[RMDB]
An RNA of 177 nucleotides, treated with DMS and 2A3 and read out base by base. The reactions ran in a buffer of 150 mM KOAc, 10 mM MgCl2 and 150 mM bicine (pH 8.5), at 24 C. High DMS reactivity at an A or C suggests that its Watson-Crick edge is free. For DMS the reverse transcriptase was MarathonRT. Values are in units of 0.01, from 0 to 300, in steps of 10. For DMS, 1,684 sequencing reads were counted.
RNA sequence: GGGAACGACUCGAGUAGAGUCGAAAAGAUAUGGAGUAUGAUGACCUGGAGGACGAAGAACUCGGAAACGAGGGAGUCCACCAGCAAGUACUCCUAAGUCAAAGUGCAUACGUUCGCGUAUGCACAAGCUAUGGACUAACUUCGGUUAGUCCAUAGCAAAAGAAACAACAACAACAAC
Reactivity to DMS in 0.01 (KOAc 150mM, MgCl2 10mM, bicine 150mM(pH8.5), 24C), signal-to-noise 3, nucleotides 027 to 126: g000a040u000a300u010g010g020a000g030u000a000u000g000a120u000g000a050c300c010u000g000g020a050g000g000a020c000g000a050a210g000a090a200c000u000c000g000g040a130a120a180c000g000a020g010g010g000a080g020u010c000c010a050c010c000a000g020c020a060a150g020u000a000c000u010c000c010u000a010a030g010u000c080a120a120a040g000u000g020c000a010u000a000c000g020u010u010c250g030c010g020u000a000u000g020c000a010c000a000a020
Reactivity to 2A3 in 0.01 (KOAc 150mM, MgCl2 10mM, bicine 150mM(pH8.5), 24C), signal-to-noise 3, nucleotides 027 to 126: g040a000u100a040u230g010g010a000g000u010a000u080g270a190u110g040a100c030c000u010g000g000a030g010g000a010c030g090a300a170g000a090a020c000u000c000g000g060a070a060a060c010g000a000g000g000g000a000g000u000c000c010a020c030c000a000g000c020a160a110g000u010a000c000u010c000c000u040a170a000g060u030c070a170a030a020g000u000g010c000a010u000a000c000g040u020u100c300g010c000g140u010a000u010g030c010a000c010a000a000